[RMDB]
RNA sequence: GGGAACGACUCGAGUAGAGUCGAAAAGGAACAUGGCGAUCAUAGCGCACUGUUACGAGUUCCGUGAUUUCCGGGUUGCUGCCUUUAAGGGUGAUGACUCGGUGGUCCUUUGCAGUGACUACCGGCAAUUGAAGAGGCGGUUCGCCGCCUCUUCAAUAAAAGAAACAACAACAACAAC
Reactivity to DMS in 0.01 (KOAc 150mM, MgCl2 10mM, bicine 150mM(pH8.5), 24C), signal-to-noise 1, nucleotides 027 to 126: g000g020a050a030c040a110u010g030g030c020g010a090u040c170a150u010a090g030c070g020c000a050c070u000g000u000u000a050c110g000a210g010u000u000c000c010g010u000g000a140u000u000u010c030c000g020g010g030u000u000g010c010u000g000c010c080u000u010u010a130a120g010g000g030u000g000a080u000g000a100c030u020c000g010g010u000g000g030u000c010c080u000u000u000g020c090a060g020u000g040a090c000u000a070c060c010g040g010c110a020